[RMDB]
RNA sequence: GGGAACGACUCGAGUAGAGUCGAAAAGUACGAACGGUUUCAUCUUCCUUGAUGCCAUCACCCAGAUGUUCUAUAAACUUGGUAGCCUCGUCCGAUUUCAUAUCCUUUGCCAACCAAUACAUAUAACUAAAAUCAGGCAUAUGUUCCACACAUCCUGUGCUAAAAGUAGUUUCGACUACUUUUAGCAAAAAGAAACAACAACAACAAC
Reactivity to DMS in 0.01 (KOAc 150mM, MgCl2 10mM, bicine 150mM(pH8.5), 24C), signal-to-noise 4, nucleotides 027 to 156: g030u000a100c060g010a080a080c060g010g010u000u000u000c030a130u000c050u000u000c050c030u000u010g010a110u000g020c040c030a100u000c020a080c010c010c010a150g020a090u000g010u000u000c050u000a140u010a080a060a080c070u000u010g010g030u000a060g020c020c020u000c030g010u000c030c040g000a090u000u000u000c040a090u010a110u000c020c040u000u000u010g000c020c040a070a110c030c020a060a140u000a070c070a080u000a080u010a070a130c050u010a050a050a090a120u000c050a050g020g030c040a120u010a080u000g010u000u000c030c020a050c030a030c130a090u010c020c010u000g030
Reactivity to 2A3 in 0.01 (KOAc 150mM, MgCl2 10mM, bicine 150mM(pH8.5), 24C), signal-to-noise 6, nucleotides 027 to 156: g060u050a030c060g010a090a020c060g040g010u020u050u050c040a060u010c040u080u050c030c040u050u050g030a020u060g050c030c020a030u020c020a040c000c020c000a020g020a100u070g060u100u040c060u090a130u110a110a140a090c040u020u030g050g020u070a020g010c000c010u020c040g020u020c030c010g040a050u010u050u060c040a040u060a090u140c020c000u030u060u090g040c020c010a030a020c010c030a080a040u090a110c070a040u180a030u080a160a060c070u120a080a050a050a130u100c020a010g020g000c020a030u050a030u130g030u040u010c040c010a020c000a010c000a070u030c010c010u010g010

Chemical mapping of a 207-nucleotide RNA with DMS and 2A3. For DMS the reverse transcriptase was MarathonRT. For 2A3, 5,269 sequencing reads were counted. The data come from the RNA Mapping Database (RMDB), library OK3TST.